[RMDB]
Annotation
This 207-nucleotide RNA was probed chemically with 2A3 and DMS. 2A3 adducts were read by reverse transcription with SuperScript II with manganese.

RNA sequence: GGGAACGACUCGAGUAGAGUCGAAAAUACAGUGCUGGAAAAUGUAGCUGAGUUAGUACCAGAUUAUGGAAGAUGUUGAAUGCCCUGACAAGGACUUAGAAUCUAUUGGGUGGUCAAUGGAUGGCUACUGUUAGUGUUUGAGUAGAAAAGUGACACACGUCAUAGUAGCAUUCGUGCUACUAUGACGAAAAGAAACAACAACAACAAC
Reactivity to 2A3 in 0.01 (KOAc 150mM, MgCl2 10mM, bicine 150mM(pH8.5), 24C), signal-to-noise 3, nucleotides 027 to 156: u180a000c070a020g020u030g050c010u050g030g050a070a090a150a150u200g030u130a060g000c050u030g020a010g090u050u080a040g000u080a080c020c030a010g040a140u110u100a100u160g040g030a020a040g010a020u000g010u010u040g050a110a040u060g000c060c020c000u020g000a020c020a040a070g050g000a020c000u000u050a050g030a130a090u030c010u040a020u060u110g050g000g000u020g000g040u050c000a030a040u040g020g030a020u040g010g030c000u000a010c020u050g010u040u020a110g030u010g060u040u060u060g050a060g010u040a020g150a040a040a030a020g040u060g050a000c030a000c000a000
Reactivity to DMS in 0.01 (KOAc 150mM, MgCl2 10mM, bicine 150mM(pH8.5), 24C), signal-to-noise 2, nucleotides 027 to 156: u010a090c070a120g040u000g030c020u000g050g000a110a070a050a080u010g020u000a090g020c030u010g030a130g000u010u000a110g010u000a110c040c020a080g030a140u010u000a150u000g030g000a080a100g010a060u000g000u000u030g000a080a090u000g020c040c010c010u000g040a030c100a060a090g060g020a030c020u000u000a140g030a100a050u010c050u000a070u000u010g020g010g040u000g030g020u000c020a070a110u010g000g020a040u010g000g010c020u010a020c050u000g020u010u000a080g020u000g000u010u000u000g010a100g040u000a130g010a060a050a070a130g040u010g010a090c040a060c060a160